[RMDB]
RNA sequence: GGGAACGACUCGAGUAGAGUCGAAAACUGUCGAGCGAUGCCGAACUCUUCGGCUGUCUUUGAUGACCCGGAUUUACAACUAUCUUCAAUCUCUUCUUGUGGGUCAAGGUCUGUCGCUAGAGGAGUCCAACCGAUUUCUAUUCGUAGAAAUCGGUUGAAAAGAAACAACAACAACAAC
Reactivity to 2A3 in 0.01 (KOAc 150mM, MgCl2 10mM, bicine 150mM(pH8.5), 24C), signal-to-noise 5, nucleotides 027 to 126: c060u040g020u050c030g020a020g020c040g050a080u190g030c000c010g030a080a060c110u060c070u300u050c050g000g000c000u020g030u030c010u050u080u290g070a060u050g060a040c000c010c010g050g030a080u090u140u170a110c060a130a050c050u100a100u120c050u120u090c050a070a150u050c030u010c000u130u020c020u050u080g020u060g070g030g020u040c030a030a020g040g010u020c050u060g060u020c020g000c010u030a010g010a020g030g010a000g020u010c020
Reactivity to DMS in 0.01 (KOAc 150mM, MgCl2 10mM, bicine 150mM(pH8.5), 24C), signal-to-noise 5, nucleotides 027 to 126: c120u010g020u000c040g010a030g020c050g020a080u010g020c010c010g000a030a190c270u010c200u010u000c000g000g010c010u000g010u010c040u000u010u010g020a060u010g000a080c010c010c090g010g010a070u000u000u000a060c090a050a060c100u010a060u010c060u000u010c130a080a100u000c020u000c090u000u010c030u000u000g000u000g010g010g010u000c030a080a060g010g010u000c050u000g000u000c030g000c020u000a060g010a070g010g000a080g000u010c150

Notes
This 177-nucleotide RNA was probed chemically with 2A3 and DMS. For DMS, 7,280 sequencing reads were counted. High 2A3 reactivity points to a flexible backbone, as in loops and unpaired stretches. The 2A3 profile rests on 4,842 reads. The RNA was probed in 150 mM KOAc, 10 mM MgCl2 and 150 mM bicine (pH 8.5) at 24 C. For DMS the reverse transcriptase was MarathonRT.